Chemical mapping of a 177-nucleotide RNA with 2A3 and DMS. The data come from the RNA Mapping Database (RMDB), library RFMREP. For 2A3, 3,843 sequencing reads were counted. For DMS, 5,560 sequencing reads were counted.

[RMDB]
RNA sequence: GGGAACGACUCGAGUAGAGUCGAAAAUUUCGUCCUUAAACCAACGAUAACAGCUGUUAGGCCAUGUUUUGUAACGGCUGUUAGGAGCGCUGUUAAGGAGUGUUAACGGUGAGUCGAUUUGGCCGGGCACCUAAUACACGUUCGCGUGUAUUAGGUGAAAAGAAACAACAACAACAAC
Reactivity to 2A3 in 0.01 (KOAc 150mM, MgCl2 10mM, bicine 150mM(pH8.5), 24C), signal-to-noise 2, nucleotides 027 to 126: u040u050u050c030g040u040c000c000u070u110a110a050a030c030c010a030a030c030g040a030u010a050a000c000a010g000c000u020g030u030u020a060g080g050c080c060a180u140g150u120u220u100u140g160u040a010a010c010g000g000c010u000g000u010u010a020g000g050a070g080c020g000c030u020g020u030u010a060a030g090g100a100g120u190g020u070u030a010a010c010g000g010u020g010a030g080u060c030g080a110u030u020u070g030g000c030c020g010g000g030
Reactivity to DMS in 0.01 (KOAc 150mM, MgCl2 10mM, bicine 150mM(pH8.5), 24C), signal-to-noise 4, nucleotides 027 to 126: u000u000u000c060g010u000c020c010u000u010a060a070a210c110c050a050a060c090g000a160u010a010a010c010a010g010c000u000g010u000u010a050g010g010c170c140a080u010g000u000u010u010u000g010u010a020a010c010g000g000c000u000g000u000u000a010g000g010a110g010c050g010c040u010g010u000u000a020a040g010g010a110g010u020g000u000u000a020a050c060g000g010u000g000a060g010u000c040g010a180u000u000u000g000g010c040c080g020g000g000
The RNA was probed in 150 mM KOAc, 10 mM MgCl2 and 150 mM bicine (pH 8.5) at 24 C.